Structure probing data (DMS and 2A3) for a 177-nucleotide construct. Conditions: 150 mM KOAc, 10 mM MgCl2 and 150 mM bicine (pH 8.5), 24 C. The 2A3 profile rests on 1,376 reads. Source: RMDB library OK1LIB, as collected in RNAgym. For DMS the reverse transcriptase was MarathonRT.

[RMDB]
RNA sequence: GGGAACGACUCGAGUAGAGUCGAAAAAUUGUUGCGAAACAGACAAGAUUAAGUAUAUUAUUCAAGGCCUUGCUUACCUAGAUGAACCAUUGAGAAAUAUACAUAUUGAGCAAUACCUCUAGGUCCGCGAUUAUAGGCCAUUCGUGGCCUAUAAUCGAAAAGAAACAACAACAACAAC
Reactivity to DMS in 0.01 (KOAc 150mM, MgCl2 10mM, bicine 150mM(pH8.5), 24C), signal-to-noise 3, nucleotides 027 to 126: a080u000u020g000u020u000g020c000g020a110a010a010c070a060g000a120c110a010a080g000a110u020u040a060a150g000u010a070u020a070u000u010a120u040u020c020a050a160g000g030c120c000u000u000g010c040u020u010a070c030c020u010a020g000a070u010g010a160a100c190c120a040u000u020g000a030g010a090a030a010u000a040u010a060c220a110u020a060u000u010g000a110g000c010a030a040u000a060c110c020u000c010u000a040g000g000u010c030c200g000
Reactivity to 2A3 in 0.01 (KOAc 150mM, MgCl2 10mM, bicine 150mM(pH8.5), 24C), signal-to-noise 3, nucleotides 027 to 126: a000u040u060g020u030u000g010c020g020a000a030a020c060a060g180a040c020a110a050g020a190u110u140a070a090g130u030a070u000a080u150u050a140u070u120c100a060a040g040g020c010c020u050u170g010c020u040u030a020c010c000u030a050g000a110u050g070a120a050c090c050a100u020u040g010a030g070a050a060a000u110a000u020a040c050a050u140a080u050u150g030a050g030c000a070a000u040a120c010c000u010c020u010a020g070g000u040c080c110g050